This 207-nucleotide RNA was probed chemically with 2A3.
The RNA was probed in 150 mM KOAc, 10 mM MgCl2 and 150 mM bicine (pH 8.5) at 24 C.
It was measured as part of the RMDB library M2RFPK.
The 2A3 profile rests on 501 reads.
For 2A3 the reverse transcriptase was SuperScript II with manganese.
2A3 is a SHAPE reagent: it acylates the 2'-hydroxyl of flexible nucleotides of all four kinds.
Reactivities are rounded to 0.1 and cut off at 0 and 3.
[RMDB]
RNA sequence: GGGAACGACUCGAGUAGAGUCGAAAACUCUGAAGGCAUGAUCACCCCGUCCGGUGCGGAAGUUCGUGCUUCCGUCGAACGCGAAAGUCGGACGGCGGCCAUGAGUCGCAACGCAAAGCCGCGGCAAUAAGCUCGUCGUCGUUCGCGACGACGAGAACCGUUAUGAUGCGUUCGCGCAUCAUAACGGAAAAGAAACAACAACAACAAC
Reactivity to 2A3 in 0.01 (KOAc 150mM, MgCl2 10mM, bicine 150mM(pH8.5), 24C), signal-to-noise 1, nucleotides 027 to 156: c020u050c110u110g110a250a090g100g000c040a000u080g030a020u100c000a060c000c000c000c000g000u000c010c000g000g000u000g040c000g060g020a000a000g010u040u270c200g210u300g000c000u000u000c010c000g000u010c000g020a140a060c090g040c060g160a180a080a050g080u050c000g010g000a000c000g000g000c000g010g050c000c000a000u050g030a000g080u040c010g000c020a050a050c040g020c040a070a220a000g130c100c070g030c000g000g020c040a060a090u150a140a000g000c010u000c000g000u070c000g000u010c000g000u050u030c120g000c000g030a010c000g030a030c000g000a000g000a010a010